[RMDB]
RNA sequence: GGGAACGACUCGAGUAGAGUCGAAAAGGGUACUAUCACAAAAAGUUAACUAGACAUUAUAUGCCUCCUGUUAGAAGUAUUCUUGGCAAGUAUUUGUGUCAUAAAAUUAAUCCUGAAUCAGACCAAGUCACUAUAUCUCUGCUUUACAGAAAAUAUACGUGAUGUCAUAUUUCGAUAUGACAUCACGAAAAGAAACAACAACAACAAC
Reactivity to DMS in 0.01 (KOAc 150mM, MgCl2 10mM, bicine 150mM(pH8.5), 24C), signal-to-noise 2, nucleotides 027 to 156: g010g030g010u000a090c030u000a160u000c000a200c040a140a070a110a080a190g030u000u010a030a070c100u020a050g000a080c000a120u010u000a120u000a230u010g000c000c020u000c010c030u000g040u000u010a050g050a070a120g010u000a050u010u000c020u000u010g030g000c010a030a070g010u000a070u010u030u020g010u000g010u000c070a080u010a070a090a070a130u000u000a050a090u010c010c010u040g030a080a110u010c070a040g000a100c070c010a050a160g020u010c030a030c070u000a080u010a100u000c030u000c020u000g000c050u020u000u010a160c030a140g000a070a030a060a190u000a030u010a150
Reactivity to 2A3 in 0.01 (KOAc 150mM, MgCl2 10mM, bicine 150mM(pH8.5), 24C), signal-to-noise 4, nucleotides 027 to 156: g040g000g000u040a010c010u070a100u220c060a050c100a120a080a060a020a050g100u140u100a130a080c050u050a070g020a040c030a030u120u160a090u120a040u270g010c010c010u040c020c030u060g040u110u060a050g020a100a010g010u020a050u040u070c040u050u030g000g000c010a060a060g050u010a110u070u110u050g090u010g010u020c030a040u100a090a140a040a020u180u070a050a060u060c010c010u040g060a030a030u070c030a020g040a070c020c000a040a000g020u030c020a010c060u020a040u020a070u180c020u000c020u030g000c010u040u060u100a060c010a020g110a030a130a110a040u130a080u070a060